[RMDB]
RNA sequence: GGGAACGACUCGAGUAGAGUCGAAAACAAUGGAGGUUCGCCUCCAUUGAAAGCGCAACCCAUCUCAACUUCAAGCGCAGCGAAAAGAGAAAGAAGGGAUAAAAAGCUACCCGUUCGCGGGUAGCAACAAACAGUAUAUGUUCGCAUAUACUGUUUGAAAAGAAACAACAACAACAAC
Reactivity to 2A3 in 0.01 (KOAc 150mM, MgCl2 10mM, bicine 150mM(pH8.5), 24C), signal-to-noise 6, nucleotides 027 to 126: c000a000a000u000g000g010a000g020g030u090u100c160g090c050c000u000c000c000a000u000u000g000a020a010a000g040c050g000c040a060a060c010c010c010a050u040c050u010c030a070a160c050u120u040c070a110a060g020c060g000c110a020g030c030g080a070a060a080a060g070a010g030a000a120a020g030a030a040g040g020g010a020u170a120a160a030a030a010g010c000u000a000c010c010c000g020u020u030c280g000c000g030g000g000u000a000g010c000a000a010
Reactivity to DMS in 0.01 (KOAc 150mM, MgCl2 10mM, bicine 150mM(pH8.5), 24C), signal-to-noise 6, nucleotides 027 to 126: c010a000a000u000g000g010a010g010g010u000u020c240g010c000c000u000c000c010a010u000u000g000a050a100a120g000c070g010c070a130a160c010c010c010a100u010c040u000c060a120a220c060u000u000c050a050a230g010c010g020c090a070g010c100g010a050a050a060a090g000a070g000a080a070a060g010a030a070g000g000g000a110u020a040a070a070a140a090g000c000u000a000c000c000c000g020u000u010c200g020c020g010g000g010u000a000g010c010a040a050
About this RNA:
An RNA of 177 nucleotides, treated with 2A3 and DMS and read out base by base. The data come from the RNA Mapping Database (RMDB), library M2PK50. DMS adducts were read by reverse transcription with MarathonRT. Values cover nucleotides 27 to 126.